[RMDB]
RNA sequence: GGGAACGACUCGAGUAGAGUCGAAAAGAUAUGGAUAGCUGUAGUCCAAUGAUGUACAGAGGUGGCUUCGGAAACGAAGCCACUACCCACCUGUAUUGAGGACGUAGAUAGCUAUCCUAAGUCAAAAGACGAUAAGAGCUUCGGCUCUUAUCGUCAACAUAUCUCAUCCGUUCGCGGAUGAGAUAUGAAAAGAAACAACAACAACAAC
Reactivity to DMS in 0.01 (KOAc 150mM, MgCl2 10mM, bicine 150mM(pH8.5), 24C), signal-to-noise 2, nucleotides 027 to 156: g000a130u000a150u000g000g010a040u000a010g020c000u000g030u000a220g020u020c010c010a080a210u010g000a140u000g020u000a010c000a000g010a190g030g030u010g000g050c040u000u000c010g020g000a130a080a300c000g000a050a000g050c000c000a000c000u000a000c040c020c070a300c200c000u040g020u010a020u000u000g000a080g040g000a000c020g030u000a100g040a020u000a040g010c000u000a000u000c000c000u000a000a090g010u000c050a100a090a130a110g000a030c010g000a030u000a000a020g020a040g020c000u000u000c300g040g020c000u000c000u000u000a010u000c010g000u010c000a010a090
Reactivity to 2A3 in 0.01 (KOAc 150mM, MgCl2 10mM, bicine 150mM(pH8.5), 24C), signal-to-noise 2, nucleotides 027 to 156: g010a000u050a010u130g000g010a000u020a000g000c000u020g010u090a050g000u060c010c010a020a300u040g010a010u030g000u010a010c000a000g010a030g000g000u020g000g010c000u000u000c000g040g000a060a040a040c020g000a000a010g010c000c010a000c000u010a000c020c000c000a040c000c000u000g010u000a010u010u040g030a020g000g000a010c040g000u060a010g050a070u040a000g000c020u000a000u000c000c000u000a030a000g000u010c020a010a010a100a150g000a000c000g000a000u000a000a010g000a000g000c030u080u130c300g130g000c010u020c000u000u000a000u000c000g000u000c000a000a000
Chemical mapping of a 207-nucleotide RNA with DMS and 2A3. The 2A3 profile rests on 2,722 reads. DMS adducts were read by reverse transcription with MarathonRT. Reactivities are rounded to 0.1 and cut off at 0 and 3. Values cover nucleotides 27 to 156. 2A3 adducts were read by reverse transcription with SuperScript II with manganese.